[RMDB]
Chemical mapping of a 177-nucleotide RNA with 2A3 and DMS. The reactions ran in a buffer of 150 mM KOAc, 10 mM MgCl2 and 150 mM bicine (pH 8.5), at 24 C. The 2A3 profile rests on 4,785 reads. It was measured as part of the RMDB library OK1LIB. Values cover nucleotides 27 to 126.
RNA sequence: GGGAACGACUCGAGUAGAGUCGAAAAGAUCGGGGUCUGCAACUCGGCCAGGUGGAGUCGGAGACGGUAGUAAUCGCAGAUCAGCAACAGAACGGUAAAUACGUUACAGGGCCUUGUACACACCGGCAAAUUAAUUAUUAUUCGUAAUAAUUAAUUUAAAAGAAACAACAACAACAAC
Reactivity to 2A3 in 0.01 (KOAc 150mM, MgCl2 10mM, bicine 150mM(pH8.5), 24C), signal-to-noise 3, nucleotides 027 to 126: g050a040u090c010g010g000g000g020u000c000u040g000c010a010a020c030u010c020g020g020c010c010a030g000g060u040g030g030a040g020u030c020g040g030a060g000a000c010g000g020u040a020g010u010a040a040u070c040g000c010a000g010a080u030c020a010g030c010a010a040c020a040g060a060a010c000g000g000u020a010a040a020u170a030c030g000u020u020a050c010a010g000g020g000c010c000u010u030g020u040a010c030a000c000a010c010c000g000g000c000
Reactivity to DMS in 0.01 (KOAc 150mM, MgCl2 10mM, bicine 150mM(pH8.5), 24C), signal-to-noise 9, nucleotides 027 to 126: g000a080u010c030g020g010g000g010u010c030u000g010c050a090a070c080u010c060g010g010c030c030a090g000g000u000g000g010a070g010u010c050g010g000a110g010a080c050g000g010u020a060g010u020a060a080u020c070g000c030a050g010a060u000c050a090g000c060a080a080c120a110g000a030a030c020g000g000u010a070a070a100u030a040c030g000u000u010a070c050a100g000g000g000c020c030u000u010g000u010a070c070a070c070a070c030c010g000g000c060
2A3 adducts were read by reverse transcription with SuperScript II with manganese. For DMS the reverse transcriptase was MarathonRT.